[RMDB]
RNA sequence: GGGAACGACUCGAGUAGAGUCGAAAAGAAUCCUCGUCGACGAUUUCGAUUUCGCAGAGCAUCUGUAUGUUUUGACUUAGCCAUAUGAUUUCUGGCUAUCUCAAUCGUCGUCGAGGAUACAAUUAGAGGGUUCCGAAUAGUUCGCUGUUCGGAACCCAAAAGAAACAACAACAACAAC
Reactivity to 2A3 in 0.01 (KOAc 150mM, MgCl2 10mM, bicine 150mM(pH8.5), 24C), signal-to-noise 6, nucleotides 027 to 126: g080a020a040u000c000c000u000c000g000u000c000g000a000c010g010a000u020u000u020c030g010a020u020u010u040c140g050c110a000g000a010g020c040a040u030c050u090g140u110a040u030g110u020u070u090u170g280a250c110u100u200a020g040c020c000a020u000a030u070g060a070u040u120u010c010u000g020g010c000u000a000u000c000u000c010a010a000u000c000g000u000c000g000u000c000g000a000g000g000a000u010a000c000a010a090u110u110a060g040a050
Reactivity to DMS in 0.01 (KOAc 150mM, MgCl2 10mM, bicine 150mM(pH8.5), 24C), signal-to-noise 2, nucleotides 027 to 126: g010a080a010u000c000c000u010c000g060u050c000g030a000c000g030a020u010u000u020c140g000a040u000u000u000c050g040c020a010g010a010g030c110a040u010c090u040g010u010a030u030g030u000u030u000u020g030a110c180u000u060a090g000c220c000a000u030a000u000g000a070u040u040u000c030u000g010g000c010u000a010u000c000u010c140a010a000u000c010g000u000c000g000u000c000g010a020g000g000a000u000a000c090a060a160u010u000a050g000a300